[RMDB]
RNA sequence: GGGAACGACUCGAGUAGAGUCGAAAAGAACCACUCCAAUGGCCUCUCCUCUUCUGCAGUGGGUGGGACUGGAGGGCCCUGGAGACCCCCCAGCACACUCGCUGACUGAGGGAUGAUGUGAGUGCAAGCACUGCUUGAUCUUCGGAUCAAGCAGUGCAAAAGAAACAACAACAACAAC
Reactivity to 2A3 in 0.01 (KOAc 150mM, MgCl2 10mM, bicine 150mM(pH8.5), 24C), signal-to-noise 2, nucleotides 027 to 126: g050a060a050c010c010a000c040u040c030c000a050a060u080g110g040c000c010u050c010u040c000c010u100c000u200u040c040u160g010c000a020g070u120g000g050g030u020g000g000g210a290c000u010g010g000a000g010g000g000c010c000c000u170g040g020a070g070a110c010c010c010c010c010c000a000g000c050a000c000a000c020u010c000g000c050u040g050a070c010u000g040a030g090g060g000a150u110g020a020u140g030u050g020a000g010u000g020c090a010a110
An RNA of 177 nucleotides, treated with 2A3 and read out base by base. It was measured as part of the RMDB library RFM100. 2A3 adducts were read by reverse transcription with SuperScript II with manganese.